[RMDB]
RNA sequence: GGGAACGACUCGAGUAGAGUCGAAAAGAUAUGGAGUAGAACUACUCCUAUCGAUGAAAGAGUUCGGAAACGAACUCUGGAGAACAAUGGAGCUACUCCUAAGUCAAAAGAGGGGUUCGCCCCUCAACAGCUAAAACGUGUUCGCACGUUUUAGCUGAAAAGAAACAACAACAACAAC
Reactivity to DMS in 0.01 (KOAc 150mM, MgCl2 10mM, bicine 150mM(pH8.5), 24C), signal-to-noise 2, nucleotides 027 to 126: g000a020u000a110u020g000g010a010g000u000a010g010a160a100c090u000a230c000u000c020c000u000a040u000c070g000a100u030g000a160a120a010g000a020g010u000u000c010g010g010a080a030a060c000g000a000a010c000u000c000u000g000g000a050g000a030a130c270a060a070u010g010g010a020g010c010u000a020c000u000c000c000u000a010a070g000u010c060a120a070a080a160g000a010g010g000g000g000u000u010c230g010c000c000c000c000u000c010a000a030
Reactivity to 2A3 in 0.01 (KOAc 150mM, MgCl2 10mM, bicine 150mM(pH8.5), 24C), signal-to-noise 1, nucleotides 027 to 126: g000a000u000a010u090g000g000a010g000u020a000g000a240a110c210u160a080c020u280c030c000u020a300u150c090g070a180u070g010a000a030a000g020a000g000u000u000c010g000g000a000a020a010c000g000a010a000c000u000c040u000g000g020a080g000a110a040c130a140a230u130g000g010a010g000c030u010a000c000u000c000c020u000a080a000g020u000c020a030a000a100a140g020a000g030g020g020g000u100u110c260g100c040c000c050c030u000c000a000a000